[RMDB]
RNA sequence: GGGAACGACUCGAGUAGAGUCGAAAAGAAACGGUAGCAACGCAGAAGCUACAGCAAUCAUAAUAAUUGCAAUUACUGGGGUUGUAGUAAUAGCCAAUACAAAUAAAAUAAGACCUAUUAAUGAUUGAAUAUCGUUUCUCAUUAAUAUAUCAGGGAACAUUUUGACUAUCUUCGGAUAGUCAAAAUGAAAAGAAACAACAACAACAAC
Reactivity to DMS in 0.01 (KOAc 150mM, MgCl2 10mM, bicine 150mM(pH8.5), 24C), signal-to-noise 2, nucleotides 027 to 156: g000a060a030a040c030g040g090u000a040g030c020a090a100c040g030c120a160g020a230a300g010c010u000a020c040a180g010c010a020a100u010c070a120u000a190a100u000a020a050u000u000g000c080a150a130u000u010a060c030u010g000g010g010g050u000u000g010u000a060g020u000a100a070u000a070g010c070c020a070a060u010a140c070a030a180a150u030a010a060a050a200u050a070a160g000a060c090c060u000a010u000u000a010a010u000g000a070u010u020g020a030a080u000a100u000c070g040u000u000u000c020u000c010a060u000u010a020a050u000a060u010a040u000c010a070g000g020g000a140a200
Reactivity to 2A3 in 0.01 (KOAc 150mM, MgCl2 10mM, bicine 150mM(pH8.5), 24C), signal-to-noise 2, nucleotides 027 to 156: g030a000a020a000c070g020g000u000a000g020c040a020a110c100g030c100a050g030a170a010g000c000u000a030c010a000g000c010a000a120u060c060a040u060a200a010u100a040a030u110u060g010c030a030a070u060u050a050c050u030g050g000g040g020u030u060g000u040a030g000u010a060a050u020a070g050c000c010a000a000u100a060c070a020a090a090u250a070a030a040a000u300a050a000g030a060c220c000u010a000u030u020a030a040u030g010a030u080u180g010a020a030u080a100u090c040g020u030u010u010c010u000c010a040u120u160a090a040u130a020u050a030u170c050a030g090g020g090a030a030

Conditions: 150 mM KOAc, 10 mM MgCl2 and 150 mM bicine (pH 8.5), 24 C. Structure probing data (DMS and 2A3) for a 207-nucleotide construct. The 2A3 profile rests on 883 reads. 2A3 adducts were read by reverse transcription with SuperScript II with manganese.